[RMDB]
RNA sequence: GGGAACGACUCGAGUAGAGUCGAAAACGGAAGACAGUGAGUGGACGGAAUAAAUCCCCUUCCCACCUCCCCACUGUCCACUCACUGUCUUCCGCAAAGGAAAUAUAAAUCGGGGGUGGGAAGGGGACGCCCUAGCUAUAUUCGUAUAGCUAGGGCGAAAAGAAACAACAACAACAAC
Reactivity to 2A3 in 0.01 (KOAc 150mM, MgCl2 10mM, bicine 150mM(pH8.5), 24C), signal-to-noise 1, nucleotides 027 to 126: c000g010g000a000a040g000a000c000a000g000u000g000a000g000u010g020g000a000c040g040g040a030a000u090a050a200a140u080c000c000c000c000u000u000c000c000c000a000c000c010u090c060c070c020c000a020c010u010g010u000c000c000a010c030u000c030a000c000u030g000u040c000u010u000c020c010g000c000a010a000a010g120g060a050a130a040u300a070u050a030a110a030u300c110g000g020g010g000g000u000g000g000g000a000a000g000g000g000g000a000